[RMDB]
RNA sequence: GGGAACGACUCGAGUAGAGUCGAAAAAUCUAAUUCUGCAUCAUGGCUUAUUUAUGUAGUCUCGCUUUUGGACCAGAAAAAUCCCCAUUUUUUAUUAUCCUUGUGCUUGUAACACACUCCAGUUCAAUGAUUGUGUACCUUUCGAGGUACACAAUCAAAAAGAAACAACAACAACAAC
Reactivity to DMS in 0.01 (KOAc 150mM, MgCl2 10mM, bicine 150mM(pH8.5), 24C), signal-to-noise 2, nucleotides 027 to 126: a080u070c060u000a100a070u010u010c020u000g010c030a100u010c060a020u020g010g040c070u020u030a060u040u010u010a050u030g010u000a080g010u000c010u010c070g030c060u010u000u010u010g000g020a070c160c080a080g010a010a070a020a090a060u010c040c010c030c030a050u000u040u030u020u030u030a060u050u040a060u010c030c020u000u000g000u010g020c020u000u000g010u020a100a110c020a020c040a050c080u000c060c050a080g000u010u000c110a030a160
Reactivity to 2A3 in 0.01 (KOAc 150mM, MgCl2 10mM, bicine 150mM(pH8.5), 24C), signal-to-noise 3, nucleotides 027 to 126: a000u110c070u070a080a090u190u010c010u000g040c000a030u040c000a050u120g030g000c000u040u130a040u130u180u020a160u180g110u080a060g010u040c000u000c010g050c010u080u130u040u050g020g010a040c010c020a050g080a020a080a050a020a040u010c030c050c000c000a020u020u000u000u030u000u060a120u160u020a040u080c020c010u000u030g060u020g000c030u050u010g060u150a060a000c040a000c000a000c050u020c050c050a100g030u030u050c030a000a060
An RNA of 177 nucleotides, treated with DMS and 2A3 and read out base by base.
The data come from the RNA Mapping Database (RMDB), libraries RFM100 and RFMREP.
2A3 adducts were read by reverse transcription with SuperScript II with manganese.
The RNA was probed in 150 mM KOAc, 10 mM MgCl2 and 150 mM bicine (pH 8.5) at 24 C.